[RMDB]
RNA sequence: GGGAACGACUCGAGUAGAGUCGAAAAGAUAUGGAUAGUGGCGAAGAACACGUUGGGUCGGAAACGACCCACCGUGGGAGCCAUCAUCCUAAGUCAAAACCUAGAUGUACUUCGGUACAUCUAGGAACCUAUUCAAUAGCUUCGGCUAUUGAAUAGGAAAAGAAACAACAACAACAAC
Reactivity to 2A3 in 0.01 (KOAc 150mM, MgCl2 10mM, bicine 150mM(pH8.5), 24C), signal-to-noise 5, nucleotides 027 to 126: g000a010u030a020u070g010g000a000u020a070g010u010g020g000c040g110a300a030g090a300a060c000a000c010g000u010u010g010g010g000u000c000g000g010a040a030a020c010g000a010c000c020c000a000c000c000g000u000g000g050g010a000g010c010c000a000u030c000a010u000c010c000u000a050a010g030u010c030a020a050a080a170c010c000u010a000g000a010u000g000u010a000c010u060u080c300g100g000u000a000c010a000u010c000u000a000g000g000a000a010
Reactivity to DMS in 0.01 (KOAc 150mM, MgCl2 10mM, bicine 150mM(pH8.5), 24C), signal-to-noise 4, nucleotides 027 to 126: g000a020u000a160u020g010g000a010u000a020g020u000g000g010c020g010a080a100g010a110a170c010a000c000g010u000u000g000g020g020u000c000g010g000a040a040a100c010g000a010c000c000c000a000c010c010g020u000g010g010g010a300g010c000c000a000u000c030a000u000c000c000u000a020a100g010u010c010a110a050a100a150c000c000u000a010g000a000u000g000u010a000c000u000u020c160g020g010u000a000c000a000u000c000u000a000g000g010a010a040
Annotation: Source: RMDB library TTRDEL, as collected in RNAgym. The record gives the reactivity of an RNA of 177 nucleotides to 2A3 and DMS. For 2A3 the reverse transcriptase was SuperScript II with manganese. DMS adducts were read by reverse transcription with MarathonRT. High DMS reactivity at an A or C suggests that its Watson-Crick edge is free. For 2A3, 19,492 sequencing reads were counted. The reactions ran in a buffer of 150 mM KOAc, 10 mM MgCl2 and 150 mM bicine (pH 8.5), at 24 C.